Structure probing data (2A3 and DMS) for a 207-nucleotide construct.
Conditions: 150 mM KOAc, 10 mM MgCl2 and 150 mM bicine (pH 8.5), 24 C.
The DMS profile rests on 4,077 reads.
For 2A3, 1,145 sequencing reads were counted.

RNA sequence: GGGAACGACUCGAGUAGAGUCGAAAAAACAUGAGUGAGAGAUGGAGGUAGGGUACAGAGUAACUUAACAUCUCAGUAGUUUCUUUCCUUUGUGUUCAUUAAGAUACAGCCCUUGACUCCCAGUUAAACCCAGGAGGUUGGAGUGCCAGCAUUUCCGUGUAGGUAGAAGUUUCGACUUCUACCUACAAAAAGAAACAACAACAACAAC
Reactivity to 2A3 in 0.01 (KOAc 150mM, MgCl2 10mM, bicine 150mM(pH8.5), 24C), signal-to-noise 2, nucleotides 027 to 156: a000a000c130a070u160g020a060g020u130g010a060g000a040g020a030u100g030g000a050g070g030u080a040g000g010g010u090a060c060a070g060a000g020u050a040a030c040u100u070a060a030c050a100u050c050u010c070a060g050u090a030g000u050u010u100c000u000u030u040c030c000u040u080u070g050u030g010u040u070c040a050u150u130a070a000g010a040u050a110c030a050g030c000c000c000u010u030g010a020c010u010c020c040c000a000g000u030u090a050a080a030c010c020c000a010g040g020a000g010g000u040u050g010g000a040g000u020g020c020c000a000g010c040a110u090u100u100c020c050g050
Reactivity to DMS in 0.01 (KOAc 150mM, MgCl2 10mM, bicine 150mM(pH8.5), 24C), signal-to-noise 2, nucleotides 027 to 156: a080a050c050a080u000g010a140g010u000g000a090g010a080g030a090u000g010g000a060g030g020u000a060g010g020g040u000a140c060a140g010a130g000u000a050a090c030u000u000a060a090c030a070u000c020u010c050a080g020u010a120g010u000u000u010c030u000u000u000c050c020u000u020u000g040u000g020u000u000c030a110u010u000a060a050g020a100u010a070c040a110g010c000c000c020u000u010g010a110c060u000c000c010c030a220g020u020u000a070a070a090c070c000c020a140g010g010a050g040g030u000u000g000g000a180g020u010g010c000c030a060g000c080a180u000u000u000c020c020g030